[RMDB]
RNA sequence: GGGAACGACUCGAGUAGAGUCGAAAAGAUAUGGACGAUCCCUCGACAUGCCUACCGGUCGGAAACGACCGAUAGGCAACAGCGAGGAUCGUCCUAAGUCAAACUCUCCAAGUUCGCUUGGAGAGAAGACUACAGACUGGUUCGCCAGUCUGUAGUCAAAAGAAACAACAACAACAAC
Reactivity to DMS in 0.01 (KOAc 150mM, MgCl2 10mM, bicine 150mM(pH8.5), 24C), signal-to-noise 2, nucleotides 027 to 126: g000a070u000a060u010g000g000a000c000g000a010u000c140c070c060u010c000g000a070c180a090u010g040c010c000u000a000c010c000g020g020u000c000g050g000a020a020a060c000g030a010c000c000g010a020u000a000g010g050c000a010a020c230a150g000c000g000a040g010g000a000u000c000g020u000c000c000u000a000a080g000u000c000a190a110a190c000u000c000u010c000c000a080a000g000u010u010c240g010c020u000u010g010g000a020g000a000g000a020a050
Reactivity to 2A3 in 0.01 (KOAc 150mM, MgCl2 10mM, bicine 150mM(pH8.5), 24C), signal-to-noise 2, nucleotides 027 to 126: g020a000u000a030u050g000g000a000c010g040a000u120c170c190c000u000c000g140a170c120a300u300g020c010c000u030a010c000c020g040g000u000c000g000g000a010a010a010c030g000a000c040c000g010a010u000a000g000g000c010a010a030c000a020g000c000g010a020g040g000a000u010c000g000u000c000c010u000a000a000g020u000c000a000a000a120c000u000c000u000c000c000a030a010g000u060u160c280g090c190u000u000g000g000a000g010a000g000a010a010